[RMDB]
RNA sequence: GGGAACGACUCGAGUAGAGUCGAAAACCUGAGCGCUUCGGCGCUCAGGAAAAUAUUUAAUGACUGUAACGAAGUGUUGCGCACACGGGUCAUUGCCUGCUAAAACAAGGCACGUUCGCGUGCCUUGGAUAUUUUCCAAGUUCGCUUGGAAAAUAUCAAAAGAAACAACAACAACAAC
Reactivity to 2A3 in 0.01 (KOAc 150mM, MgCl2 10mM, bicine 150mM(pH8.5), 24C), signal-to-noise 3, nucleotides 027 to 126: c000c000u000g020a000g010c050g020c040u100u160c300g130g010c020g010c020u000c000a000g000g000a000a010a020a000u070a000u020u180u080a060a040u050g020a010c030u060g060u140a140a030c100g090a280a270g030u010g000u110u120g050c110g000c060a000c000a000c010g020g020g000u020c020a020u020u040g060c000c000u060g080c060u120a090a120a010a010c010a000a000g010g000c020a000c000g000u050u050c150g000c000g050u000g000c000c000u020u010g000
Reactivity to DMS in 0.01 (KOAc 150mM, MgCl2 10mM, bicine 150mM(pH8.5), 24C), signal-to-noise 3, nucleotides 027 to 126: c010c000u000g000a010g020c000g050c010u000u010c190g040g020c010g000c010u000c000a000g010g000a010a030a040a090u000a120u020u020u000a040a030u010g000a020c010u000g010u020a130a140c090g000a100a120g020u000g000u000u010g010c160g020c050a040c010a030c030g000g000g000u000c010a030u010u000g000c010c010u000g010c190u010a040a050a070a250c020a000a010g000g020c000a020c010g000u010u010c220g030c010g030u000g000c000c010u000u000g000
Structure probing data (2A3 and DMS) for a 177-nucleotide construct. DMS adducts were read by reverse transcription with MarathonRT. The RNA was probed in 150 mM KOAc, 10 mM MgCl2 and 150 mM bicine (pH 8.5) at 24 C. For 2A3 the reverse transcriptase was SuperScript II with manganese.